Structure probing data (2A3 and DMS) for a 177-nucleotide construct. Source: RMDB library OK1LIB, as collected in RNAgym.

[RMDB]
RNA sequence: GGGAACGACUCGAGUAGAGUCGAAAAGAGCGUCGAGAGACGAAGAGAAGUGCAUAGAUCCACAACGGAGAACGUAAUAAUGCACACCUGUGGAUUAGUGUCCGGAACAACGGGCACAAGAGGCAGAACUAUAUGAGGUGUUCGCACCUCAUAUAGUAAAAGAAACAACAACAACAAC
Reactivity to 2A3 in 0.01 (KOAc 150mM, MgCl2 10mM, bicine 150mM(pH8.5), 24C), signal-to-noise 9, nucleotides 027 to 126: g080a010g030c010g000u010c020g010a020g010a010g010a080c050g030a090a020g070a010g040a200a040g030u020g020c010a030u030a070g080a080u010c010c000a040c040a130a100c150g030g010a090g030a120a020c040g030u050a040a080u120a160a050u190g020c040a010c000a020c040c010u020g010u040g050g030a040u020u080a060g000u000g000u000c000c000g010g040a070a070c100a090a050c080g000g000g010c000a000c000a000a010g070a020g060g000c030a010g030a110
Reactivity to DMS in 0.01 (KOAc 150mM, MgCl2 10mM, bicine 150mM(pH8.5), 24C), signal-to-noise 9, nucleotides 027 to 126: g010a090g010c020g000u000c010g000a220g010a210g010a030c010g020a090a050g010a120g010a100a100g000u000g000c020a030u010a070g010a120u010c010c010a060c110a090a070c120g000g000a130g000a100a110c100g020u020a080a100u020a110a060u000g010c040a030c030a100c150c010u000g010u000g000g000a190u010u010a090g010u000g010u000c000c000g000g000a160a120c290a120a130c000g010g000g000c010a000c000a030a020g000a270g000g000c020a040g000a150